[RMDB]
RNA sequence: GGGAACGACUCGAGUAGAGUCGAAAAAGGAGCAAUCUAUUUACAGACGCAGCAUGCUAGUUUCUGAUAGAAUAGAAAGCGUAAAGAACUUGGAUGACGCUGUUAUCCUACUCAACUCCGAAGACGAGCUUUCUAGUUUAUUCGUAAACUAGAAAGCAAAAGAAACAACAACAACAAC
Reactivity to 2A3 in 0.01 (KOAc 150mM, MgCl2 10mM, bicine 150mM(pH8.5), 24C), signal-to-noise 5, nucleotides 027 to 126: a000g080g010a080g010c020a030a060u000c000u020a020u030u030u030a020c010a010g010a010c010g020c010a010g010c020a040u210g090c010u060a040g010u040u050u000c020u010g090a200u060a160g110a040a010u010a020g010a030a050a000g030c050g010u060a050a090a030g060a060a040c050u130u080g020g020a010u030g020a020c020g020c300u030g010u020u020a010u000c000c000u010a040c040u050c030a060a100c020u010c030c020g040a060a010g080a080c090g030a050
Reactivity to DMS in 0.01 (KOAc 150mM, MgCl2 10mM, bicine 150mM(pH8.5), 24C), signal-to-noise 6, nucleotides 027 to 126: a110g010g010a100g010c050a070a200u000c010u010a020u000u000u000a100c020a010g010a040c070g020c010a040g010c080a120u010g010c020u010a080g020u000u000u000c000u000g010a130u010a100g010a020a020u000a020g000a030a030a190g000c020g010u010a060a100a140g000a080a070c090u010u000g010g010a050u000g000a020c020g020c210u020g010u010u000a030u000c020c010u000a070c110u000c040a070a130c060u000c010c030g010a100a110g020a120c200g010a150